[RMDB]
RNA sequence: GGGAACGACUCGAGUAGAGUCGAAAAGGACAGGGAGGAUCGAUGAGGUACCGGAUCUAGUAGGUACCAAGCUAGCUAUAUAUACGCUCGCUAGCAUAGAGCGUUACCGGAAACGGGACCUGUCCGAAUAUAGGCUAGUGUUCGCACUAGCCUAUAUAAAAGAAACAACAACAACAAC
Reactivity to 2A3 in 0.01 (KOAc 150mM, MgCl2 10mM, bicine 150mM(pH8.5), 24C), signal-to-noise 1, nucleotides 027 to 126: g000g000a020c000a010g070g010g030a150g110g060a130u100c050g040a090u090g040a040g030g000u010a010c010c020g010g040a070u050c050u110a070g090u060a040g080g000u020a020c000c010a010a000g000c010u020a000g000c030u010a010u000a000u010a000u010a300c090g020c070u040c040g000c000u030a010g040c010a050u070a010g040a010g010c030g020u020u070a060c000c000g010g000a030a070a000c010g010g000g010a020c000c000u000g000u000c000c010g000a010
Reactivity to DMS in 0.01 (KOAc 150mM, MgCl2 10mM, bicine 150mM(pH8.5), 24C), signal-to-noise 5, nucleotides 027 to 126: g020g010a020c000a020g020g020g000a140g020g000a080u000c030g000a100u000g020a270g000g010u000a020c000c010g020g010a190u010c140u010a090g010u010a100g010g000u000a020c040c030a060a060g010c020u000a030g010c030u010a100u000a120u000a160u010a080c200g010c080u000c170g000c030u000a060g000c040a160u000a060g000a060g010c030g000u000u000a060c000c010g010g000a030a080a170c010g000g000g000a090c010c010u000g010u000c010c000g000a080

Conditions: 150 mM KOAc, 10 mM MgCl2 and 150 mM bicine (pH 8.5), 24 C. Structure probing data (2A3 and DMS) for a 177-nucleotide construct. The 2A3 profile rests on 3,171 reads. For DMS, 5,605 sequencing reads were counted.